[RMDB]
RNA sequence: GGGAACGACUCGAGUAGAGUCGAAAAUUGUCUUCAUUAAUGUUUUGGGGUGUGAUGGAUGUAAGCGCGAUAUCCGCAAACAUUUUGUACGCAAGGAAUAUCUUAUUGCAGGAAGAAAUACACCAGCGACUAGGUAUCCAUUCGUGGAUACCUAGUCAAAAGAAACAACAACAACAAC
Reactivity to 2A3 in 0.01 (KOAc 150mM, MgCl2 10mM, bicine 150mM(pH8.5), 24C), signal-to-noise 2, nucleotides 027 to 126: u100u080g020u010c000u030u030c060a110u030u270a180a080u120g030u010u060u050u090g090g000g050g000u060g060u070g080a120u070g070g080a070u090g050u160a090a080g060c040g040c000g050a050u050a030u100c010c020g090c090a020a050a020c010a010u090u080u090u220g090u050a040c020g000c020a030a040g020g000a120a120u050a060u180c020u040u110a110u090u050g000c050a020g090g020a050a080g030a010a070a000u090a020c070a000c010c010a010g060c030
Reactivity to DMS in 0.01 (KOAc 150mM, MgCl2 10mM, bicine 150mM(pH8.5), 24C), signal-to-noise 3, nucleotides 027 to 126: u000u010g020u000c040u000u000c030a120u020u010a080a050u000g000u000u010u000u000g020g010g020g020u000g010u000g030a120u000g010g000a090u010g010u010a080a130g000c060g000c120g020a070u000a040u020c010c000g020c030a040a110a040c020a050u000u000u000u000g010u010a090c250g010c060a060a060g000g000a080a090u010a060u000c040u000u000a120u000u000g010c020a080g010g000a030a050g010a070a040a050u000a090c090a140c020c020a110g020c210